Chemical mapping of a 177-nucleotide RNA with DMS and 2A3. Reactivities are given for positions 27 through 126.

RNA sequence: GGGAACGACUCGAGUAGAGUCGAAAAUGGUAGUCCACGCCGUAAACGAUGCGCACUAAAUCGGUGCCGGUCUGACCCGGUAUCGGUCGACGUGAAAACGAUAAGUGCGCCGCCUGGGGAGUACGGUCACCUGUAACAACUUCGGUUGUUACAGGUGAAAAGAAACAACAACAACAAC
Reactivity to DMS in 0.01 (KOAc 150mM, MgCl2 10mM, bicine 150mM(pH8.5), 24C), signal-to-noise 1, nucleotides 027 to 126: u000g000g030u000a070g010u020c100c050a080c160g010c040c000g010u010a080a050a090c100g000a140u010g010c030g000c000a050c040u000a110a120a050u000c010g010g000u000g000c030c030g030g000u000c150u010g020a100c100c000c010g020g040u000a010u000c010g000g010u010c080g010a100c030g000u000g010a090a030a140a040c030g000a120u000a060a110g020u000g010c010g000c010c150g010c050c030u000g010g000g000g000a200g010u000a050c050g000g000u010
Reactivity to 2A3 in 0.01 (KOAc 150mM, MgCl2 10mM, bicine 150mM(pH8.5), 24C), signal-to-noise 1, nucleotides 027 to 126: u120g000g000u000a040g050u000c010c010a050c080g030c030c000g010u050a050a130a000c030g040a130u170g000c010g000c010a000c020u030a010a040a100u060c000g010g010u010g000c000c010g030g010u000c180u230g120a150c010c000c020g020g000u040a020u030c000g010g000u010c030g030a080c000g030u040g090a120a020a010a040c010g030a060u020a190a000g000u010g000c010g040c000c000g050c030c020u070g000g000g000g010a030g000u040a010c020g010g060u020
The DMS profile rests on 719 reads.